[RMDB]
RNA sequence: GGGAACGACUCGAGUAGAGUCGAAAAGUGCGGAGUGAAAUUCAUAGGUGCUUCGCCAAUUUGGCGGAACGACCCGGUACUCCGCGUAGUCGCGAUGUAAACGUUCGGUGUUGGCGUUCAGGCCUCAGAGUAUGAUCCCGUUCGCGGGAUCAUACUCAAAAGAAACAACAACAACAAC
Reactivity to DMS in 0.01 (KOAc 150mM, MgCl2 10mM, bicine 150mM(pH8.5), 24C), signal-to-noise 1, nucleotides 027 to 126: g060u000g040c000g000g030a030g000u070g030a090a200a090u060u030c090a130u070a110g010g050u000g000c060u000u000c000g000c000c000a050a190u010u070u030g000g010c010g000g010a000a050c000g000a020c090c000c260g000g000u060a010c000u000c000c000g000c000g000u000a070g000u040c050g070c050g000a000u010g000u000a000a180a070c280g050u030u020c100g000g000u000g000u120u000g030g010c000g050u000u010c110a070g000g090c000c050u010c030a160

The record gives the reactivity of an RNA of 177 nucleotides to DMS. Reactivities are given for positions 27 through 126.